[RMDB]
Structure probing data (2A3 and DMS) for a 177-nucleotide construct. For 2A3, 4,522 sequencing reads were counted. 2A3 adducts were read by reverse transcription with SuperScript II with manganese.

RNA sequence: GGGAACGACUCGAGUAGAGUCGAAAAGAUAUGGAAUGUGGAGUACGUAUUUCAGCGUUGAAAUCGGAAACGAUGGAGCUGAAUAUGAAACACAUUCCUAAGUCAAACCUCGAGUUCGCUCGAGGAAGCAUUUCAUUACGUUCGCGUAAUGAAAUGCAAAAGAAACAACAACAACAAC
Reactivity to 2A3 in 0.01 (KOAc 150mM, MgCl2 10mM, bicine 150mM(pH8.5), 24C), signal-to-noise 2, nucleotides 027 to 126: g020a000u030a060u150g000g000a000a010u020g000u020g000g010a000g000u020a030c110g000u020a070u020u300u100c010a010g020c000g270u300u080g020a000a020a000u000c000g020g050a070a060a030c010g000a000u020g040g020a020g000c000u000g010a000a000u030a030u100g000a000a010a000c000a000c000a000u000u000c000c010u000a060a000g020u000c000a100a010a180c000c000u000c000g030a020g020u110u200c300g040c140u010c000g010a010g000g000a000a000
Reactivity to DMS in 0.01 (KOAc 150mM, MgCl2 10mM, bicine 150mM(pH8.5), 24C), signal-to-noise 2, nucleotides 027 to 126: g000a040u010a300u000g010g030a000a000u000g000u000g000g000a100g000u000a110c300g000u000a030u010u000u010c000a000g020c010g000u000u020g000a070a080a020u000c000g000g000a090a100a140c000g000a020u000g010g030a130g030c000u000g010a000a000u000a010u010g000a160a120a130c000a010c000a000u000u000c000c000u010a020a100g000u000c010a090a040a100c020c000u000c010g020a030g010u010u000c270g040c000u000c000g010a020g000g000a010a060